[RMDB]
RNA sequence: GGGAACGACUCGAGUAGAGUCGAAAAACCCUGAGCCCCUCCCGCCGCCUACACCUUGAUCUUAUUUGAUUGGGUCGUGACUCCAGCCCCGCCGAGCCGACCCGAAAUGAGAAGCUCUCCUCCUGUGCUGUCUAAUAUCGUUCGCGAUAUUAGACAGAAAAGAAACAACAACAACAAC
Reactivity to DMS in 0.01 (KOAc 150mM, MgCl2 10mM, bicine 150mM(pH8.5), 24C), signal-to-noise 5, nucleotides 027 to 126: a060c020c000c010u020g010a130g000c030c010c020c030u000c020c040c030g020c020c040g010c020c000u000a080c100a070c060c030u010u010g000a080u000c020u000u010a060u010u010u000g000a170u010u020g020g020g000u000c010g020u010g000a150c010u000c020c080a130g010c060c010c010c040g010c100c130g000a020g000c020c010g000a040c010c000c000g010a010a040a050u010g000a040g010a070a140g010c030u000c010u000c010c010u000c010c000u000g000u010g010
Reactivity to 2A3 in 0.01 (KOAc 150mM, MgCl2 10mM, bicine 150mM(pH8.5), 24C), signal-to-noise 8, nucleotides 027 to 126: a000c010c000c000u010g050a030g030c010c010c000c000u010c000c000c000g010c020c000g010c000c010u050a030c020a030c030c020u050u090g050a050u040c010u040u130a140u100u130u090g210a160u040u140g020g000g000u020c010g020u050g080a180c000u010c010c020a020g010c020c000c000c010g030c020c010g000a000g000c000c000g010a010c000c000c000g010a020a020a020u090g010a030g010a040a010g010c000u010c010u010c010c010u020c000c010u050g020u060g070